[RMDB]
RNA sequence: GGGAACGACUCGAGUAGAGUCGAAAAUCAUCUAGUGCGAUGGCAAUGCUUCAAAGUAAAUGGAGAAUUUCGAAGGCUAGCGUCUCUAGAUAAAUCUCAGCCUAACCCUUUUACACGAAGUUUUCCACCCAUCGGGACGUUUCGACGUCCCGAUGGGAAAAGAAACAACAACAACAAC
Reactivity to 2A3 in 0.01 (KOAc 150mM, MgCl2 10mM, bicine 150mM(pH8.5), 24C), signal-to-noise 3, nucleotides 027 to 126: u120c020a050u020c060u040a030g060u010g120c060g000a010u000g000g030c040a080a130u090g000c000u010u000c000a070a140a050g090u080a090a160a130u040g040g000a050g080a230a130u020u090u270c080g070a150a030g080g000c020u040a060g000c020g080u080c020u050c070u210a060g000a060u100a090a070a080u050c040u010c100a050g000c000c000u010a020a030c020c030c000u000u000u000u070a030c120a000c070g000a010a030g000u010u000u000u060c010c000a050
About this RNA:
The data come from the RNA Mapping Database (RMDB), library OK1LIB. This 177-nucleotide RNA was probed chemically with 2A3. The reactions ran in a buffer of 150 mM KOAc, 10 mM MgCl2 and 150 mM bicine (pH 8.5), at 24 C. 2A3 is a SHAPE reagent: it acylates the 2'-hydroxyl of flexible nucleotides of all four kinds.